[RMDB]
RNA sequence: GGGAACGACUCGAGUAGAGUCGAAAAAGUCACCUAUUACGAUAGGUGACAUUUGAACCAGCGAACAAUUCAGUUGCGAGAUUCGAGGUUUCAGUCUGAAUCAUAGUUGCCAUUACGAUGGCUACAACUCACUCCCGACUGUUCGCAGUCGGGAGAACUCGAAGAGAUGGUUCGCCAUCUCUUCGAGAAAAGAAACAACAACAACAAC
Reactivity to 2A3 in 0.01 (KOAc 150mM, MgCl2 10mM, bicine 150mM(pH8.5), 24C), signal-to-noise 1, nucleotides 027 to 156: a000g000u000c000a000c000c000u010a040u040u080a110c300g040a020u000a000g000g000u020g010a000c000a000u010u070u120g030a000a000c000c000a000g160c000g010a000a000c010a030a140u000u000c000a010g010u000u000g000c000g010a010g040a010u000u010c020g000a060g000g090u260u250u260c030a040g180u020c000u000g000a000a000u080c070a040u030a080g000u020u010g000c000c000a010u040u040a040c210g060a020u000g010g000c010u100a050c000a020a070c020u140c240a040c000u000c000c000c000g030a000c000u020g070u130u130c180g020c140a000g000u000c000g010g000g000a000g000a000a000
Source: RMDB library M2RFPK, as collected in RNAgym. An RNA of 207 nucleotides, treated with 2A3 and read out base by base. Reactivities are given for positions 27 through 156. The reactions ran in a buffer of 150 mM KOAc, 10 mM MgCl2 and 150 mM bicine (pH 8.5), at 24 C.